[RMDB]
RNA sequence: GGGAACGACUCGAGUAGAGUCGAAAAAGAAAGAGAGCGUAGCACACACACAGACUAAGUCUGACACACACCUACGCUACAUGUGUCUGUGAAGUCGAGAUAUCGACAAGUGUGUGUGAUGAAAAAAGUCAAAACUAUCGUUCGCGAUAGUUUUGACAAAAGAAACAACAACAACAAC
Reactivity to DMS in 0.01 (KOAc 150mM, MgCl2 10mM, bicine 150mM(pH8.5), 24C), signal-to-noise 1, nucleotides 027 to 126: a100g000a000a120a090g050a090g000a070g020c080g000u000a040g010c040a010c030a000c000a060c000a030c000a030g000a040c000u030a110a180g030u000c040u000g000a050c010a000c040a020c030a070c030c010u000a010c030g030c170u020a050c130a060u000g010u000g020u000c150u010g000u000g010a060a080g000u000c010g000a060g030a150u010a050u030c000g050a000c010a040a100g000u000g000u010g030u000g040u010g000a040u010g010a000a020a110a080a020a100
Reactivity to 2A3 in 0.01 (KOAc 150mM, MgCl2 10mM, bicine 150mM(pH8.5), 24C), signal-to-noise 1, nucleotides 027 to 126: a000g050a000a030a000g140a020g030a010g030c030g120u050a040g000c020a030c020a000c000a000c000a000c000a040g040a000c000u080a110a110g060u000c030u010g040a000c000a000c000a000c000a000c020c010u030a000c010g000c000u030a000c020a040u190g050u020g020u010c030u060g090u020g060a050a000g000u000c010g020a000g020a160u190a070u130c000g000a010c020a040a120g000u000g000u000g000u000g030u000g010a050u100g000a000a070a000a000a040a000
Chemical mapping of a 177-nucleotide RNA with DMS and 2A3. Conditions: 150 mM KOAc, 10 mM MgCl2 and 150 mM bicine (pH 8.5), 24 C. For DMS the reverse transcriptase was MarathonRT. The DMS profile rests on 1,106 reads.